[RMDB]
RNA sequence: GGGAACGACUCGAGUAGAGUCGAAAAGGAGUGUGCAAGUCAAUAGCCCCGGCGGCCACCACGCCGAACGCAACGCAGACCGCUACCGGUGUAGUGUGUGUCAAGCCACCUUUGACGAGUAUGAGGAGCGCGAGCGGCGCACCGAGGCGAGUGCAACCCACCAUCAAUUAUUCGUAAUUGAUGGUGGAAAAGAAACAACAACAACAAC
Reactivity to 2A3 in 0.01 (KOAc 150mM, MgCl2 10mM, bicine 150mM(pH8.5), 24C), signal-to-noise 5, nucleotides 027 to 156: g070g020a070g050u110g010u060g040c060a090a050g040u080c030a060a090u080a170g000c010c020c020c050g000g010c010g020g050c020c030a060c030c000a020c040g000c010c010g020a070a010c080g010c040a040a050c070g000c090a070g070a120c020c060g030c030u060a100c030c030g050g000u060g010u080a180g000u050g020u010g010u020g040u130c070a080a010g010c000c020a100c020c010u030u050u070g050a060c050g020a010g080u100a080u200g020a040g020g020a050g030c040g000c030g020a040g080c030g010g020c030g000c010a010c000c010g010a020g000g040c020g010a030g020u060g010c030a030a050c010
Reactivity to DMS in 0.01 (KOAc 150mM, MgCl2 10mM, bicine 150mM(pH8.5), 24C), signal-to-noise 2, nucleotides 027 to 156: g010g010a090g030u010g010u000g040c030a100a120g000u000c050a070a160u000a140g000c020c030c020c050g000g040c040g010g020c030c020a070c040c020a080c020g000c000c000g000a080a130c060g050c030a080a090c050g040c030a140g010a110c120c010g010c020u010a060c040c060g000g020u000g030u010a050g010u010g020u000g060u000g000u000c070a070a180g030c060c020a060c070c030u010u000u000g020a120c020g010a170g030u000a050u000g000a130g000g000a130g000c030g030c050g000a100g000c020g020g020c000g020c030a050c020c040g000a080g040g020c020g020a100g000u000g010c010a060a120c110

An RNA of 207 nucleotides, treated with 2A3 and DMS and read out base by base. The RNA was probed in 150 mM KOAc, 10 mM MgCl2 and 150 mM bicine (pH 8.5) at 24 C. For DMS the reverse transcriptase was MarathonRT. For 2A3, 4,076 sequencing reads were counted. The data come from the RNA Mapping Database (RMDB), library OK3TST.